[RMDB]
RNA sequence: GGGAACGACUCGAGUAGAGUCGAAAAGUCAUUGUGGCAUUUUCUUCGAUGAAACAUUAUGCCAAGAAUUGCCUGAAAUUGAUGUCAUUUUUGGUAGUCAUACGCAUCAUUAUUUUGAACAUGGUGACUCGACAUAGCGGUUCGCCGCUAUGUCGAGAAAAGAAACAACAACAACAAC
Reactivity to 2A3 in 0.01 (KOAc 150mM, MgCl2 10mM, bicine 150mM(pH8.5), 24C), signal-to-noise 2, nucleotides 027 to 126: g130u090c050a070u030u030g000u080g010g000c070a120u050u010u030u000c040u050u020c020g160a120u080g090a020a110a000c000a000u180u210a020u160g000c000c000a000a000g060a130a090u160u130g030c050c020u080g010a180a130a030u220u260g050a100u190g110u110c020a000u000u030u070u000u070g100g000u030a010g050u060c030a100u060a140c050g000c000a040u030c000a000u010u050a050u100u120u090u090g120a080a080c050a040u080g010g000u040g000a020
Reactivity to DMS in 0.01 (KOAc 150mM, MgCl2 10mM, bicine 150mM(pH8.5), 24C), signal-to-noise 1, nucleotides 027 to 126: g000u000c140a020u010u070g100u000g000g000c000a000u000u000u000u000c150u000u020c290g110a120u000g000a140a020a080c300a180u010u060a030u090g010c000c060a000a140g000a070a000u010u010g000c000c080u000g060a140a160a140u060u020g000a010u070g000u000c000a030u020u000u000u070u000g000g000u000a050g000u050c080a000u000a020c130g000c000a020u000c000a040u000u060a070u000u000u070u000g000a220a040c070a090u000g000g020u000g000a180

Chemical mapping of a 177-nucleotide RNA with 2A3 and DMS. The reactions ran in a buffer of 150 mM KOAc, 10 mM MgCl2 and 150 mM bicine (pH 8.5), at 24 C. High DMS reactivity at an A or C suggests that its Watson-Crick edge is free. For DMS, 809 sequencing reads were counted. The data come from the RNA Mapping Database (RMDB), library OK1LIB. For DMS the reverse transcriptase was MarathonRT.